[RMDB]
RNA sequence: GGGAACGACUCGAGUAGAGUCGAAAAGGGGGUGAACACAACGGCCUGGGACCGUGGGAGGCUGCGUCCGUCGCUGGAAUUCCUUUCUGUACGACCUUACGGCGCUGAUGGACGUGAUACGGAGCAAUGCUACCGUAGACUUCGGUCUACGGUAGCAAAAAGAAACAACAACAACAAC
Reactivity to 2A3 in 0.01 (KOAc 150mM, MgCl2 10mM, bicine 150mM(pH8.5), 24C), signal-to-noise 2, nucleotides 027 to 126: g040g020g020g000g040u100g030a150a000c090a000c000a120a070c090g000g000c020c020u080g060g000g000a090c080c090g010u020g050g000g000a080g020g010c010u060g010c020g010u000c050c000g000u010c020g000c000u030g050g000a020a030u110u150c010c000u030u250u000c000u000g060u020a090c030g010a040c040c000u090u070a080c090g020g000c060g000c000u050g020a060u090g000g030a070c050g000u030g040a010u000a180c090g050g080a000g110c080a030a220
Reactivity to DMS in 0.01 (KOAc 150mM, MgCl2 10mM, bicine 150mM(pH8.5), 24C), signal-to-noise 2, nucleotides 027 to 126: g000g040g000g010g040u020g000a060a020c150a110c280a040a080c070g000g030c100c060u020g020g030g020a120c070c080g000u010g000g010g010a130g000g000c120u030g100c000g060u010c000c000g010u000c050g030c060u060g080g040a040a110u000u020c050c010u000u030u020c050u000g000u060a050c180g000a190c060c060u000u000a060c070g000g010c050g000c130u010g000a000u000g030g000a040c010g000u000g000a080u010a060c130g010g020a140g000c280a130a150